[RMDB]
An RNA of 207 nucleotides, treated with 2A3 and read out base by base.
RNA sequence: GGGAACGACUCGAGUAGAGUCGAAAAAACGCUCUGCGCGAACCAAUAGGUGCCGAUAACACUCGCACCGACUUCGCCCUCGCCGCCUGAGCGAGCCUCGAAGUCCGUCAGCCCGGGGAACGCUUCCGCCCCGGUUCCUGGCGUCAUCUAGGAAGCCGGAUAAAGUGAGGUUCGCCUCACUUUAUCCAAAAGAAACAACAACAACAAC
Reactivity to 2A3 in 0.01 (KOAc 150mM, MgCl2 10mM, bicine 150mM(pH8.5), 24C), signal-to-noise 2, nucleotides 027 to 156: a000a030c030g000c020u070c100u270g080c130g000c010g030a050a040c040c040a070a160u190a210g000g000u040g100c200c100g040a080u150a280a150c170a070c120u030c010g010c000a010c010c000g000a000c010u010u010c000g040c010c010c000u000c000g000c030c000g070c040c110u100g020a080g020c000g000a010g010c010c010u030c020g000a000a000g010u000c030c000g000u010c000a000g010c000c000c000g000g000g000g010a080a030c060g000c000u010u000c010c010g020c000c000c000c000g000g000u050u060c010c010u010g000g000c010g030u050c010a090u020c030u040a020g000g020a000a020g000c000c040
Description:
Conditions: 150 mM KOAc, 10 mM MgCl2 and 150 mM bicine (pH 8.5), 24 C.